[RMDB]
RNA sequence: GGGAACGACUCGAGUAGAGUCGAAAAGAUAUGGAGCAGGUACUUUUGACGACUAGUCACCUCGGAAACGAGGUGAGGUCGAUAAGUACUCUGCUCCUAAGUCAAAGCUCCUGGUUCGCCAGGAGCAGUUGGUGAAGAUGUUCGCAUCUUCACCAACAAAAGAAACAACAACAACAAC
Reactivity to 2A3 in 0.01 (KOAc 150mM, MgCl2 10mM, bicine 150mM(pH8.5), 24C), signal-to-noise 3, nucleotides 027 to 126: g050a010u070a040u180g000g000a000g000c000a000g040g000u010a010c020u130u150u200u240g300a210c040g000a000c000u070a080g300u030c010a000c000c010u000c000g010g040a100a100a080c020g000a000g010g010u000g000a000g010g000u000c000g010a040u030a060a000g000u000a000c040u040c000u060g000c000u000c000c000u000a000a000g000u020c010a020a020a050g000c000u000c000c000u000g030g030u060u100c300g030c100c010a000g000g000a000g000c010a000
Reactivity to DMS in 0.01 (KOAc 150mM, MgCl2 10mM, bicine 150mM(pH8.5), 24C), signal-to-noise 3, nucleotides 027 to 126: g010a050u000a300u000g000g000a010g010c010a020g030g010u000a000c000u000u000u000u000g010a210c130g020a010c030u010a110g000u000c000a000c010c000u010c010g010g000a140a110a190c000g020a020g020g050u000g000a000g010g000u000c000g000a100u000a010a020g020u000a010c000u020c000u000g000c010u000c000c000u000a010a050g000u000c050a130a140a170g010c000u000c000c000u000g010g020u000u010c250g010c000c010a010g010g000a020g010c000a000